[RMDB]
RNA sequence: GGGAACGACUCGAGUAGAGUCGAAAAAAGAUAUGGAUGACCAAGAUGAGGCUGAUGACCUAGGGUUUCUCUUUAUCGGAAACGAUAAAGGAAACCCUAGCAAGGCUUGAGGUCAUCCUAAGUCAAACACGCAUAACGUGUUCGCACGUUAUGCGUGAAAAGAAACAACAACAACAAC
Reactivity to DMS in 0.01 (KOAc 150mM, MgCl2 10mM, bicine 150mM(pH8.5), 24C), signal-to-noise 2, nucleotides 027 to 126: a090a080g000a040u000a300u000g000g000a010u000g000a030c010c000a040a300g010a270u010g030a140g020g020c010u000g020a150u020g000a060c300c000u000a000g000g010g000u000u000u000c010u000c020u000u000u000a000u000c020g010g000a120a100a120c010g000a020u000a000a020a010g000g000a000a010a030c000c000c000u000a000g030c030a100a070g000g000c000u000u000g010a250g000g000u000c000a000u000c040c000u020a000a050g000u010c020a090a070a170